The data come from the RNA Mapping Database (RMDB), library 15KREP.
Structure probing data (2A3 and DMS) for a 177-nucleotide construct.
DMS adducts were read by reverse transcription with MarathonRT.
The RNA was probed in 150 mM KOAc, 10 mM MgCl2 and 150 mM bicine (pH 8.5) at 24 C.
Reactivities are given for positions 27 through 126.
For 2A3 the reverse transcriptase was SuperScript II with manganese.

RNA sequence: GGGAACGACUCGAGUAGAGUCGAAAAUCGGUGAGUACAUUUUCGAGCGCAUUGAUUAUAGUGAUGCUGUAUCCUACAAGUCUAGUACAACGUAUAAACUGACUGUAGGUGACAUCUUCGUACUUACGUCAUGAAACGUGUUCGCACGUUUCAUGACAAAAGAAACAACAACAACAAC
Reactivity to 2A3 in 0.01 (KOAc 150mM, MgCl2 10mM, bicine 150mM(pH8.5), 24C), signal-to-noise 2, nucleotides 027 to 126: u100c000g010g000u000g000a000g010u030a000c010a120u040u040u020u110c080g080a030g030c050g000c020a000u030u020g120a090u140u160a070u180a140g120u090g020a030u010g020c040u030g020u040a030u070c000c000u010a010c010a120a050g000u000c030u150a000g000u060a020c070a160a020c130g150u230a040u080a170a210a040c000u000g000a000c010u030g010u000a000g030g000u000g000a000c000a030u010c030u040u030c050g000u020a010c000u000u010a010c010
Reactivity to DMS in 0.01 (KOAc 150mM, MgCl2 10mM, bicine 150mM(pH8.5), 24C), signal-to-noise 1, nucleotides 027 to 126: u000c100g000g020u020g010a030g000u020a060c000a110u020u000u040u000c100g050a100g000c140g010c090a040u010u000g010a080u000u010a120u000a110g010u010g010a020u010g000c020u000g020u010a170u000c000c000u000a020c030a030a110g010u000c000u000a010g000u000a090c170a120a100c280g010u000a090u000a030a140a090c100u000g000a010c010u000g030u000a000g010g010u000g000a120c170a020u010c040u000u000c120g030u000a020c010u000u000a010c090